The record gives the reactivity of an RNA of 177 nucleotides to 2A3 and DMS.
[RMDB]
RNA sequence: GGGAACGACUCGAGUAGAGUCGAAAAACGGUCCUAAGGUAGCGAAAUUCCUUGUCGGGUAAGUUCCGACCCGCACGAAUGGUGUAACGAUUUGGAUACUGUCUCAACGAGAGACCCGGUGAAAUUAGGCACAUACUAAGUUCGCUUAGUAUGUGCCAAAAGAAACAACAACAACAAC
Reactivity to 2A3 in 0.01 (KOAc 150mM, MgCl2 10mM, bicine 150mM(pH8.5), 24C), signal-to-noise 2, nucleotides 027 to 126: a000c050g020g050u080c000c000u040a040a000g020g000u040a030g080c060g060a070a070a130u100u050c020c000u030u060g030u040c000g000g010g010u060a070a000g040u060u000c020c000g050a020c060c020c000g040c010a020c040g090a170a230u130g050g030u020g010u060a140a060c100g050a200u030u030u130g060g000a040u080a230c000u020g040u010c020u020c030a050a190c110g050a040g000a000g020a230c030c010c000g060g000u100g080a070a120a120u090u080a070
Reactivity to DMS in 0.01 (KOAc 150mM, MgCl2 10mM, bicine 150mM(pH8.5), 24C), signal-to-noise 2, nucleotides 027 to 126: a140c180g010g000u000c010c020u000a090a080g020g020u000a070g010c140g020a060a030a130u000u000c010c030u000u000g010u000c020g030g010g000u020a050a050g020u000u000c010c010g000a050c040c000c110g030c070a010c100g000a110a030u000g010g000u000g000u000a070a140c160g000a100u000u010u000g020g010a090u010a010c090u010g010u000c040u000c020a090a100c120g020a110g030a050g000a050c050c030c000g020g010u010g000a040a010a300u010u010a040
Notes
Values cover nucleotides 27 to 126.